[RMDB]
RNA sequence: GGGAACGACUCGAGUAGAGUCGAAAACCAGACAGCCCCACCCUGACCUAGAGCAAAUGCUCGGGGCGCUCCCCUGGGCUUGAAACUUGCAGUAACAGGUGUGAACAUUCUAGUAGUAGUUUGAUGACUACUGUCAUCCGUUCGCGGAUGACAGUAGAAAAGAAACAACAACAACAAC
Reactivity to 2A3 in 0.01 (KOAc 150mM, MgCl2 10mM, bicine 150mM(pH8.5), 24C), signal-to-noise 2, nucleotides 027 to 126: c000c000a010g060a030c060a040g060c010c020c010c000a020c020c000c000u030g000a060c010c020u040a050g000a000g030c030a030a050a130u120g010c010u000c000g000g010g010g000c050g030c020u050c000c000c000c000u030g010g000g000c000u050u080g000a070a000a050c020u040u050g040c010a030g070u080a110a060c020a020g040g050u110g040u030g080a030a020c040a100u090u080c070u110a040g020u020a030g000u000a030g000u090u050u120g120a160u140g050a020
Reactivity to DMS in 0.01 (KOAc 150mM, MgCl2 10mM, bicine 150mM(pH8.5), 24C), signal-to-noise 2, nucleotides 027 to 126: c000c010a140g000a090c090a170g000c060c030c020c030a140c010c070c010u000g010a070c160c010u000a180g010a080g000c030a090a070a110u000g000c010u010c010g000g000g000g010c210g000c190u000c030c030c030c000u000g000g020g000c000u010u030g030a090a070a090c110u000u010g000c070a080g050u030a060a060c040a040g020g020u020g010u010g000a080a060c070a040u000u030c050u010a070g000u030a070g020u000a030g010u000u010u000g000a090u070g000a270
Source: RMDB libraries RFM100 and RFMREP, as collected in RNAgym.
Chemical mapping of a 177-nucleotide RNA with 2A3 and DMS.
2A3 adducts were read by reverse transcription with SuperScript II with manganese.
The RNA was probed in 150 mM KOAc, 10 mM MgCl2 and 150 mM bicine (pH 8.5) at 24 C.